[RMDB]
This 177-nucleotide RNA was probed chemically with 2A3 and DMS. For DMS the reverse transcriptase was MarathonRT. For 2A3 the reverse transcriptase was SuperScript II with manganese. It was measured as part of the RMDB library VIROID. For 2A3, 1,113 sequencing reads were counted. The reactions ran in a buffer of 150 mM KOAc, 10 mM MgCl2 and 150 mM bicine (pH 8.5), at 24 C. In probing experiments dimethyl sulfate is read out at A N1 and C N3, which are open when not base-paired.
RNA sequence: GGGAACGACUCGAGUAGAGUCGAAAAUGCCCAGGUCGGACCGCGAGGAGGUGGAGAUGCCAUGCCGACCCGAAGAGGAAAGAAGGACGCGAGACACGAACCUGUGAGUGGAAACCCGCUUUAUUCAACCGUUUAAUUACUUCGGUAAUUAAACGGUAAAAGAAACAACAACAACAAC
Reactivity to 2A3 in 0.01 (KOAc 150mM, MgCl2 10mM, bicine 150mM(pH8.5), 24C), signal-to-noise 1, nucleotides 027 to 126: u110g000c000c010c000a020g010g060u010c000g030g030a020c010c010g000c040g070a060g060g000a040g000g060u050g030g070a070g040a090u100g000c020c000a070u130g000c040c000g020a030c000c010c010g000a060a050g090a070g090g010a090a090a130g070a020a030g050g000a020c030g010c060g000a070g010a040c050a000c040g040a060a050c000c000u060g050u060g090a030g020u070g060g000a090a050a030c000c000c000g020c050u130u140u090a260u060u200c030a040
Reactivity to DMS in 0.01 (KOAc 150mM, MgCl2 10mM, bicine 150mM(pH8.5), 24C), signal-to-noise 2, nucleotides 027 to 126: u010g010c010c000c000a110g000g000u010c010g000g000a140c070c090g020c130g000a150g010g020a100g000g010u020g010g020a070g000a100u020g020c030c050a050u010g000c030c050g000a090c030c010c030g010a090a090g000a070g000g030a030a070a060g010a060a070g020g000a070c070g000c060g010a050g000a060c090a040c050g000a090a070c080c010u000g010u000g010a100g000u000g000g010a060a090a080c050c030c010g010c160u010u010u000a120u020u000c150a070